[RMDB]
RNA sequence: GGGAACGACUCGAGUAGAGUCGAAAAGCGUACUACGAUUCUUUUGACGCUCGGGGAAGCAAGGUGCUUCCCAAAUAGGAAGCACUGAUGACCUUCGCCGUGAGCGAUAAGAAUCGUAUCGCAAACUGAGUAGGUUGGUUCGCCAACCUACUCAGAAUGAAUGUAUUUACUUCGGUAAAUACAUUCAAAAAGAAACAACAACAACAAC
Reactivity to DMS in 0.01 (KOAc 150mM, MgCl2 10mM, bicine 150mM(pH8.5), 24C), signal-to-noise 2, nucleotides 027 to 156: g040c010g030u010a040c130u000a000c000g000a020u000u010c000u000u010u020u000g030a130c020g010c000u000c010g020g000g000g010a030a020g030c010a070a160g050g040u000g000c000u010u000c010c000c000a000a020a100u010a060g030g020a030a010g000c030a010c000u000g000a120u000g000a070c300c000u000u000c000g010c010c000g030u010g020a040g020c000g020a090u000a020a030g010a030a030u000c010g000u000a000u000c020g020c020a090a080a220c010u000g010a040g010u000a000g010g020u000u000g010g010u000u000c300g010c040c020a020a000c000c000u010a000c000u000c010a000g020a060a140
Reactivity to 2A3 in 0.01 (KOAc 150mM, MgCl2 10mM, bicine 150mM(pH8.5), 24C), signal-to-noise 4, nucleotides 027 to 156: g000c020g020u110a060c050u020a000c030g010a000u000u000c010u030u120u070u160g250a100c020g010c000u010c000g000g000g010g010a000a010g020c050a080a110g010g010u010g000c000u020u010c000c030c000a060a100a020u160a010g000g000a000a000g000c010a000c000u010g040a150u100g020a030c020c000u010u010c110g160c170c020g100u170g050a010g010c010g040a040u020a020a010g000a000a010u000c000g020u000a010u030c000g010c000a020a020a080c000u000g000a000g000u000a000g000g010u000u000g000g020u040u070c160g020c090c000a000a000c000c000u000a000c000u000c000a000g000a000a000